Source information:
An RNA of 207 nucleotides, treated with 2A3 and read out base by base. It was measured as part of the RMDB library M2RFPK. As a SHAPE reagent, 2A3 marks flexible, mostly unpaired nucleotides at the ribose 2'-OH. Reactivities are given for positions 27 through 156.
RNA sequence: GGGAACGACUCGAGUAGAGUCGAAAAGAAAUAAAGAAGAAUCACCAGGAGGCAAGGAUCCUCAACUACGUUAUUCGGGCACCUUGAGUUGAGAGGAGCUAGUGGUGCGCCCGGCCUGGAGAUCAAAACACGACAGGCGGGUUCGCCCGCCUGUCAAGAUUGAUUAUCACUUCGGUGAUAAUCAAUCAAAAGAAACAACAACAACAAC
Reactivity to 2A3 in 0.01 (KOAc 150mM, MgCl2 10mM, bicine 150mM(pH8.5), 24C), signal-to-noise 1, nucleotides 027 to 156: g020a000a110a000u290a080a020a010g110a050a050g040a050a040u030c000a010c010c000a000g000g000a050g030g030c040a020a120g020g000a030u030c000c010u020c000a020a000c010u250a070c040g110u200u100a020u010u210c000g000g040g000c010a020c000c010u100u280g030a000g020u020u010g010a030g000a010g000g000a000g010c020u000a000g030u000g080g000u010g000c000g000c020c010c000g010g010c000c010u000g010g010a030g000a010u060c030a010a140a040a060c100a000c100g050a000c000a030g020g000c020g010g000g000u020u000c030g080c000c000c000g000c020c000u000g000u000c000a000a000

Reactivities are rounded to 0.1 and cut off at 0 and 3. The RNA was probed in 150 mM KOAc, 10 mM MgCl2 and 150 mM bicine (pH 8.5) at 24 C.